An RNA of 177 nucleotides, treated with 2A3 and DMS and read out base by base. DMS adducts were read by reverse transcription with MarathonRT. The 2A3 profile rests on 1,130 reads.
[RMDB]
RNA sequence: GGGAACGACUCGAGUAGAGUCGAAAACUUGAAUUGGUGCAAAUAAUGAAUUGUUAUUUACAACUGAUCCUGUCAUAAACACACCUAUCCAACCUAAGAUUGGUGAUAGAACUGGGAAGACAUUACCCUGGUUCAGUGUAUUCGUACACUGAACCAGAAAAGAAACAACAACAACAAC
Reactivity to 2A3 in 0.01 (KOAc 150mM, MgCl2 10mM, bicine 150mM(pH8.5), 24C), signal-to-noise 2, nucleotides 027 to 126: c050u050u060g090a060a020u060u030g050g000u030g020c060a010a010a030u040a040a040u060g110a150a160u180u150g000u030u000a050u050u080u020a140c130a160a000c030u000g010a010u020c010c000u040g070u090c050a070u090a160a220a020c050a030c020a060c010c010u020a020u000c050c090a050a150c020c020u060a080a030g040a170u040u050g000g000u000g000a040u040a040g080a090a050c050u040g020g000g050a060a000g040a040c000a020u080u090a060c060c000
Reactivity to DMS in 0.01 (KOAc 150mM, MgCl2 10mM, bicine 150mM(pH8.5), 24C), signal-to-noise 2, nucleotides 027 to 126: c050u020u010g020a060a030u000u000g000g000u000g000c000a030a020a010u000a020a040u000g000a120a100u010u010g000u000u000a030u000u000u000a050c020a070a120c010u000g020a020u020c010c020u010g000u020c110a050u020a050a150a210c130a080c070a090c170c020u020a030u010c020c020a020a010c060c060u000a120a070g010a120u000u000g000g010u000g000a060u000a070g010a000a270c190u020g000g000g000a220a120g000a080c030a020u000u010a100c080c040

The reactions ran in a buffer of 150 mM KOAc, 10 mM MgCl2 and 150 mM bicine (pH 8.5), at 24 C.